Chemical mapping of a 170-nucleotide RNA with 2A3 and DMS. The data come from the RNA Mapping Database (RMDB), library 15KLIB. Conditions: 150 mM KOAc, 10 mM MgCl2 and 150 mM bicine (pH 8.5), 24 C. Reactivities are rounded to 0.1 and cut off at 0 and 3.
[RMDB]
RNA sequence: GGGAACGACUCGAGUAGAGUCGAAAAACGACAACUCUGGGGAGAAAAGGGAGGAUCGGAUGGGAAGAGUAUAUCCUACGGGAAUCCGCGAUCCCCUCUCACGUCCAACCCAUCCCCGGUCCGAGUGAACGCCAUCACUUCGGUGAUGGCAAAAGAAACAACAACAACAAC
Reactivity to 2A3 in 0.01 (KOAc 150mM, MgCl2 10mM, bicine 150mM(pH8.5), 24C), signal-to-noise 4, nucleotides 027 to 129: a000c030g090a080c010a130a020c070u000c020u090g000g000g000g000a050g010a020a110a060a060g020g000g000a030g000g000a010u060c040g030g030a040u100g050g000g000a030a000g030a020g060u040a020u030a020u050c020c000u030a050c130g060g000g000a020a020u050c110c050g000c020g050a120u020c000c000c010c010u000c000u000c010a090c030g000u000c020c010a040a050c000c000c000a010u010c000c000c000c000g010g000u000c000c010g040a030g000u080g040a080a010c100
Reactivity to DMS in 0.01 (KOAc 150mM, MgCl2 10mM, bicine 150mM(pH8.5), 24C), signal-to-noise 4, nucleotides 027 to 129: a100c100g000a180c210a090a070c000u030c100u040g070g030g000g000a080g020a060a120a130a030g000g050g060a150g010g040a000u070c100g000g020a010u070g000g000g000a000a060g010a010g030u020a040u040a170u030c020c020u040a000c120g010g080g020a110a100u030c100c030g020c140g040a120u000c050c010c000c070u020c050u050c040a050c290g000u040c010c050a060a100c040c020c000a140u000c040c020c010c040g040g000u050c090c130g010a050g020u030g020a050a070c250